[RMDB]
Chemical mapping of a 207-nucleotide RNA with 2A3. The reactions ran in a buffer of 150 mM KOAc, 10 mM MgCl2 and 150 mM bicine (pH 8.5), at 24 C. Reactivities are given for positions 27 through 156. The 2A3 profile rests on 870 reads. The data come from the RNA Mapping Database (RMDB), library M2RFPK.
RNA sequence: GGGAACGACUCGAGUAGAGUCGAAAACAAUGAUGAGCAAUACGCUAUUGCCGCCUAAAAACGGUUAGCCGGGGCUGCUAGAGCCUUGUUACCAAAGAUAGCCGGCGGGGACUUCGGUCCCCGUCGUUGAAGGGCUGUACGUUCGCGUACAGCCCAACAUAUCACAUGCCUUCGGGCAUGUGAUAUGAAAAGAAACAACAACAACAAC
Reactivity to 2A3 in 0.01 (KOAc 150mM, MgCl2 10mM, bicine 150mM(pH8.5), 24C), signal-to-noise 1, nucleotides 027 to 156: c070a060a200u250g070a070u090g030a090g070c030a080a060u120a230c060g000c010u010a020u040u220g000c000c000g000c000c000u080a100a040a010a010a000c010g010g020u020u010a000g010c020c010g000g000g000g000c010u080g000c010u000a040g010a020g110c000c000u000u010g040u070u050a050c040c020a000a030a000g040a060u030a000g010c010c000g020g020c000g040g000g000g030a000c020u010u080c260g150g000u000c010c050c000c000g000u000c000g000u000u010g000a010a000g010g000g010c000u000g030u020a000c000g010u010u080c210g000c000g050u000a000c000a000g010c000c000c000a000a000